[RMDB]
RNA sequence: GGGAACGACUCGAGUAGAGUCGAAAACUUUGAUGGGAUUUCCAAUGUUUGUGAUAAAUAGAUACAAAGCCAAAACGUACGAAUUGUUUUCAUUAUCGAUAUCCUGAAAUGAAAUGUUUGAAAGUUCUAUCACCUAAAGAUUCGUCUUUAGGUGAUAAAAAGAAACAACAACAACAAC
Reactivity to 2A3 in 0.01 (KOAc 150mM, MgCl2 10mM, bicine 150mM(pH8.5), 24C), signal-to-noise 4, nucleotides 027 to 126: c050u090u090u180g130a100u100g120g020g030a080u080u000u040c030c000a070a030u120g040u050u050u060g060u040g010a070u060a150a130a040u090a090g090a020u050a110c050a040a040a000g070c070c070a030a160a010a000c110g080u110a020c040g060a050a060u070u050g060u040u010u000u050c030a020u020u060a070u110c020g020a040u000a070u280c040c000u040g000a100a040a000u050g030a070a010a020u040g150u000u060u140g180a230a150a000g000u000u010c010
Reactivity to DMS in 0.01 (KOAc 150mM, MgCl2 10mM, bicine 150mM(pH8.5), 24C), signal-to-noise 5, nucleotides 027 to 126: c020u000u010u010g030a070u020g000g000g020a090u010u000u010c030c040a080a110u030g000u010u000u000g020u020g010a080u020a050a060a080u030a080g010a130u020a060c080a040a050a100g010c070c070a040a030a040a110c180g000u010a080c110g000a100a090u010u010g010u000u000u000u000c020a020u000u010a060u010c050g000a060u030a050u010c060c050u010g000a050a070a030u020g000a020a050a050u000g000u010u010u000g000a050a100a140g000u020u010c070